[RMDB]
RNA sequence: GGGAACGACUCGAGUAGAGUCGAAAAGGAGAGUAGAUGAUUCUCGUUAAGUGUGUGUGACUGGGAUGUCUUCACACAACGAAGCGAGAGCGCGGUGAAUCAUGGCAUCAGCUCCAAAGAAAGAAAAACCUAAUCGCAUCUUCGGAUGCGAUUAGGUAAAAGAAACAACAACAACAAC
Reactivity to 2A3 in 0.01 (KOAc 150mM, MgCl2 10mM, bicine 150mM(pH8.5), 24C), signal-to-noise 2, nucleotides 027 to 126: g030g010a030g010a000g030u170a000g000a090u140g000a040u050u000c010u000c000g000u080u030a130a070g040u020g000u000g000u000g040u090g010a010c010u030g000g010g160a070u140g010u050c040u090u110c000a010c000a000c000a020a030c020g020a060a020g010c010g000a010g000a020g000c010g000c040g020g040u110g050a030a000u030c000a070u110g080g000c030a010u040c040a090g020c010u030c000c010a090a060a010g140a030a150a010g190a010a090a000a040
Reactivity to DMS in 0.01 (KOAc 150mM, MgCl2 10mM, bicine 150mM(pH8.5), 24C), signal-to-noise 2, nucleotides 027 to 126: g000g000a070g010a110g000u000a070g010a020u040g000a000u030u020c020u020c000g000u010u020a060a290g030u040g020u000g000u000g020u000g000a020c080u000g000g030g010a180u040g000u000c000u060u030c000a000c000a000c000a000a050c040g030a110a050g020c030g000a070g000a120g050c120g010c010g040g030u000g030a070a000u000c090a040u010g000g030c030a090u010c030a140g020c040u000c000c000a010a140a070g010a090a030a070g000a100a020a080a110